[RMDB]
RNA sequence: GGGAACGACUCGAGUAGAGUCGAAAACCACAAUAGUGGAUCGAUCGUAUCAGCAAACGGAUACCCUAGGAAGGCUAUGAGACGACAAGCCUAGGGUAAACGAAUGCGUUGGUGAAAACGCGACGAGGUUUGUACAUAGUUUCGACUAUGUACAAACAAAAGAAACAACAACAACAAC
Reactivity to DMS in 0.01 (KOAc 150mM, MgCl2 10mM, bicine 150mM(pH8.5), 24C), signal-to-noise 6, nucleotides 027 to 126: c000c010a110c200a120a090u060a060g010u010g000g010a080u010c030g000a090u010c000g010u000a080u010c070a220g000c000a010a020a260c010g000g000a300u000a010c010c000c000u010a010g000g010a070a080g010g020c080u010a100u030g010a140g010a080c130g010a080c110a070a060g000c000c000u000a010g000g000g020u000a010a010a170c000g000a030a250u010g000c010g000u000u000g000g000u010g000a070a040a070a070c130g010c020g000a030c030g000a060g010
Reactivity to 2A3 in 0.01 (KOAc 150mM, MgCl2 10mM, bicine 150mM(pH8.5), 24C), signal-to-noise 9, nucleotides 027 to 126: c000c010a040c050a080a260u290a090g100u100g110g020a080u040c020g040a100u010c010g020u100a040u130c040a040g000c000a010a000a030c000g010g000a010u000a020c000c000c000u010a010g030g010a100a070g110g000c060u110a120u300g070a090g040a170c180g050a070c060a100a010g060c000c000u000a000g000g000g000u000a000a000a000c000g000a010a000u040g000c000g000u030u100g050g060u100g070a090a070a010a020c070g010c010g020a020c010g010a040g060
Chemical mapping of a 177-nucleotide RNA with DMS and 2A3. The RNA was probed in 150 mM KOAc, 10 mM MgCl2 and 150 mM bicine (pH 8.5) at 24 C. It was measured as part of the RMDB library OK1LIB. For DMS, 18,072 sequencing reads were counted.